RNA sequence: GGGAACGACUCGAGUAGAGUCGAAAACCGUAGGACGUCACCCAUUUCUUUGAUCGAUGGUGCAUGGUAUCAUUCGAAAGAGUGAUAUCUGUGAUGCCAUCGGGAGAAAUGGCAAGUCGUCCUAAACGGAAAAACUCAAACCUUCGGGUUUGAGUAACAUUUAGAUGCAGUUCGCUGCAUCUAAAUGAAAAGAAACAACAACAACAAC
Reactivity to 2A3 in 0.01 (KOAc 150mM, MgCl2 10mM, bicine 150mM(pH8.5), 24C), signal-to-noise 6, nucleotides 027 to 156: c000c000g020u010a010g000g010a000c000g000u010c010a070c050c000c010a010u000u020u000c040u120u150u100g210a280u180c010g010a000u010g000g000u020g010c010a010u050g000g000u000a000u000c000a010u010u000c010g050a120a060a060g000a030g010u000g000a000u010a010u010c010u010g040u020g020a300u070g000c000c000a000u000c000g000g010g000a010g000a000a010a000u010g010g000c010a150a150g010u000c000g000u000c000c000u020a070a080a010c010g040g040a040a090a020a060a020c000u010c010a010a000a000c010c000u050u140c300g080g000g000u010u000u000g000a000g000u000a000a000
Reactivity to DMS in 0.01 (KOAc 150mM, MgCl2 10mM, bicine 150mM(pH8.5), 24C), signal-to-noise 3, nucleotides 027 to 156: c000c020g040u000a050g030g010a020c010g020u000c030a250c180c000c000a030u010u010u010c010u010u000u010g010a150u000c020g010a020u000g010g050u000g020c010a050u000g010g030u000a020u000c000a000u010u000c030g000a240a120a290g010a030g040u010g000a010u000a020u000c000u010g030u000g000a150u000g010c000c000a000u000c000g000g010g020a060g000a020a010a020u000g000g010c020a030a100g010u000c010g030u000c000c010u000a000a030a080c010g010g010a110a050a060a120a050c000u000c000a010a020a010c000c000u000u000c300g050g050g010u000u000u000g000a040g020u000a020a100

Conditions: 150 mM KOAc, 10 mM MgCl2 and 150 mM bicine (pH 8.5), 24 C. An RNA of 207 nucleotides, treated with 2A3 and DMS and read out base by base. 2A3 adducts were read by reverse transcription with SuperScript II with manganese. For 2A3, 13,421 sequencing reads were counted. 2A3 is a SHAPE reagent: it acylates the 2'-hydroxyl of flexible nucleotides of all four kinds.